[RMDB]
RNA sequence: GGGAACGACUCGAGUAGAGUCGAAAAGUUAGGCGAGGCUCCUAUACAAACACAGGUUGCUGAGCUGACGACGUCGAGAGACGCCCAAGAUUAGGACAGGAUAUAUCGAACCAAGGUAUAUCCCCAUAAAACUCGGAACACUUCGGUGUUCCGAGAAGGUAAUCAGGCAGUUCGCUGCCUGAUUACCAAAAGAAACAACAACAACAAC
Reactivity to 2A3 in 0.01 (KOAc 150mM, MgCl2 10mM, bicine 150mM(pH8.5), 24C), signal-to-noise 1, nucleotides 027 to 156: g090u080u090a090g000g190c000g000a000g010g000c000u020c000c010u040a060u070a230c210a050a200a000c040a000c040a070g090g000u180u160g020c000u000g000a000g000c000u020g000a000c000g000a000c000g000u000c020g020a000g000a010g000a120c010g020c000c010c010a010a010g130a090u160u260a030g050g100a100c130a170g000g000a020u010a010u010a000u000c020g040a070a120c080c070a100a060g000g000u000a000u000a000u000c020c000c010c010a080u220a070a170a040a010c000u000c000g020g000a000a000c010a000c020u060u130c120g030g000u000g000u000u000c000c000g000a000g000a000a000